RNA sequence: GGGAACGACUCGAGUAGAGUCGAAAAAAGGCACGCACUACCUUAAAGGUAUGGCUGUCUACGAUGACAACCUCCCCAAAGGCGUCGACCUCAUGUUCAACACGAACAAGUCGAAUACCGGAAAUAAGCUUGACGCCAUGAAGCCUCUCAAGGAGGAAUCUGGAUUGAUAUUCGUAUCAAUCCAGAUAAAAGAAACAACAACAACAAC
Reactivity to DMS in 0.01 (KOAc 150mM, MgCl2 10mM, bicine 150mM(pH8.5), 24C), signal-to-noise 3, nucleotides 027 to 156: a030a000g020g000c010a100c120g010c090a160c050u000a020c000c000u000u000a100a120a110g040g010u000a020u020g020g000c020u010g030u020c010u000a120c220g030a210u000g020a090c030a040a040c020c010u010c040c000c020c010a120a120a230g030g020c010g020u010c010g000a040c020c010u000c060a100u010g000u000u000c030a070a100c140a180c080g030a080a100c060a080a120g000u000c030g000a100a070u000a100c050c030g010g000a110a080a060u000a080a040g000c030u000u020g010a090c020g020c000c010a060u000g010a070a100g000c020c000u000c000u000c090a120a100g030g000a040g060g000a080
Reactivity to 2A3 in 0.01 (KOAc 150mM, MgCl2 10mM, bicine 150mM(pH8.5), 24C), signal-to-noise 6, nucleotides 027 to 156: a000a000g070g000c060a060c160g010c020a110c090u010a000c020c020u140u180a190a130a120g030g000u060a060u060g000g020c000u000g010u000c000u010a050c140g140a090u170g020a030c030a050a070c090c000u030c010c020c000c010a050a080a010g000g000c000g010u020c010g010a040c000c030u120c080a080u070g000u010u020c030a110a090c090a080c300g010a040a000c010a070a040g040u050c020g030a060a060u080a140c030c040g030g070a060a100a040u160a060a050g030c030u080u100g010a020c030g020c020c000a010u090g050a030a030g020c010c000u030c010u030c040a070a040g100g000a000g010g000a010
The record gives the reactivity of an RNA of 207 nucleotides to DMS and 2A3. For DMS the reverse transcriptase was MarathonRT. The data come from the RNA Mapping Database (RMDB), library OK3TST.